[RMDB]
RNA sequence: GGGAACGACUCGAGUAGAGUCGAAAAGACAUUUCACCUCUUGUUUGUGGACGAGGCUAACUUUAUCAAGAAGGAGGCCCUGCCGGCGAUCCUGGGCUUUAUGCUUCAGAAGGAUGCCAAGAUUAUCUUCAUCUCGUCUGUGAACUCGGCUGACCAGAUCUCAAGUUAUGUUCGCAUAACUUGAGAUAAAAGAAACAACAACAACAAC
Reactivity to DMS in 0.01 (KOAc 150mM, MgCl2 10mM, bicine 150mM(pH8.5), 24C), signal-to-noise 3, nucleotides 027 to 156: g020a110c060a100u000u000u000c050a100c030c010u000c030u000u010g020u010u000u000g040u020g050g020a050c050g020a080g000g030c040u000a060a260c030u000u000u000a140u020c180a120a170g010a060a060g010g020a300g010g010c040c010c010u000g000c050c020g000g040c010g020a040u000c040c010u010g010g030g030c020u000u000u000a080u010g020c010u000u000c040a100g010a090a090g010g020a160u010g000c060c030a080a070g000a230u000u000a090u000c020u000u000c040a100u000c030u000c030g000u000c010u000g020u010g000a040a070c020u000c060g000g030c070u000g020a170c060c040a110g010
Reactivity to 2A3 in 0.01 (KOAc 150mM, MgCl2 10mM, bicine 150mM(pH8.5), 24C), signal-to-noise 6, nucleotides 027 to 156: g040a020c050a070u110u110u060c080a130c040c000u080c040u050u090g030u070u040u060g060u040g010g010a020c010g030a030g020g010c040u070a080a030c020u070u110u110a200u250c100a140a080g040a030a020g070g030a020g040g000c020c030c050u050g040c080c040g050g010c030g050a020u020c000c020u010g010g000g000c000u060u100u110a140u280g040c000u060u110c020a030g040a080a020g060g000a020u050g010c030c020a020a020g010a040u160u170a070u120c080u130u070c020a060u020c020u000c000g020u000c010u020g050u020g010a020a000c000u020c030g070g000c070u060g040a070c010c060a050g030
Conditions: 150 mM KOAc, 10 mM MgCl2 and 150 mM bicine (pH 8.5), 24 C. The record gives the reactivity of an RNA of 207 nucleotides to DMS and 2A3. The DMS profile rests on 7,048 reads.